Annotation
This 207-nucleotide RNA was probed chemically with 2A3. Values cover nucleotides 27 to 156.
RNA sequence: GGGAACGACUCGAGUAGAGUCGAAAAGUCCAAAAUUGAUUCGGCGGCCCUGUCAUGAGGCCGAAACGAAGGCACGUACCCCUUCGAAUGGCGUCGGGGAGUCAGCGGCCAUAUAUGCGCCUAAUGCUAAAGUCGUGCUGGUUCGCCAGCACGACAACUUUACCUCAGACUUCGGUCUGAGGUAAAGAAAAGAAACAACAACAACAAC
Reactivity to 2A3 in 0.01 (KOAc 150mM, MgCl2 10mM, bicine 150mM(pH8.5), 24C), signal-to-noise 1, nucleotides 027 to 156: g070u030c020c000a160a000a090a000u120u100g060a070u090u090c020g010g030c030g000g050c010c000c030u110g070u090c090a140u070g010a060g030g070c000c030g000a030a000a000c000g010a010a010g040g010c030a000c240g130u150a140c010c020c000c000u050u000c030g120a070a150u050g030g030c040g080u030c020g040g000g010g000a040g110u080c030a000g040c040g050g000c020c000a030u030a000u010a010u110g040c000g040c020c060u110a100a000u090g000c020u080a240a010a000g000u000c040g000u030g000c010u000g000g000u010u030c050g000c060c010a000g000c000a000c000g000a000c000a010a000
Notes
Conditions: 150 mM KOAc, 10 mM MgCl2 and 150 mM bicine (pH 8.5), 24 C. 2A3 adducts were read by reverse transcription with SuperScript II with manganese.